[RMDB]
An RNA of 207 nucleotides, treated with DMS and 2A3 and read out base by base. The reactions ran in a buffer of 150 mM KOAc, 10 mM MgCl2 and 150 mM bicine (pH 8.5), at 24 C.

RNA sequence: GGGAACGACUCGAGUAGAGUCGAAAAAACUAAAGCAGAAUGACGCAUUUCAUUCAGUACCACAGGGCCAGAUCAUGGAUCAGACAUGGGAUAUUCAGACCUGAAGUCUAAUGUAAUUUGGAGACACGAAAUAGAUGAAAUCUUUACUACAGUGCGACACCCGUUAAGGAUUCGUCCUUAACGGGUGAAAAGAAACAACAACAACAAC
Reactivity to DMS in 0.01 (KOAc 150mM, MgCl2 10mM, bicine 150mM(pH8.5), 24C), signal-to-noise 2, nucleotides 027 to 156: a070a070c050u010a080a140a130g020c060a100g000a040a030u000g000a060c200g010c150a180u000u000u000c060a060u040u000c010a160g020u010a100c060c020a120c060a140g040g030g050c040c020a160g010a050u000c010a100u030g010g010a080u000c040a130g030a060c030a060u000g000g000g000a170u000a040u000u000c060a090g030a100c050c030u040g020a130a090g040u010c030u010a040a100u000g010u010a070a090u000u000u010g000g010a110g010a100c030a190c050g000a010a010a090u010a060g010a110u000g010a010a040a140u010c000u000u000u000a080c010u000a070c040a060g000u010g000c000g020a270
Reactivity to 2A3 in 0.01 (KOAc 150mM, MgCl2 10mM, bicine 150mM(pH8.5), 24C), signal-to-noise 2, nucleotides 027 to 156: a000a000c180u220a140a030a000g140c010a010g010a060a030u030g010a050c020g020c110a050u000u090u100c020a020u110u000c010a020g040u050a020c000c010a050c020a080g000g030g000c000c000a000g000a030u070c040a060u060g030g020a060u070c050a010g010a010c020a010u060g000g090g000a010u020a080u110u120c070a020g030a130c030c040u080g040a080a030g020u000c000u070a120a030u070g020u060a000a160u060u070u060g080g000a050g000a000c030a010c060g000a080a000a000u110a020g120a070u100g030a020a100a100u030c040u060u120u010a010c010u020a000c030a040g020u010g030c040g030a000
2A3 adducts were read by reverse transcription with SuperScript II with manganese. DMS adducts were read by reverse transcription with MarathonRT.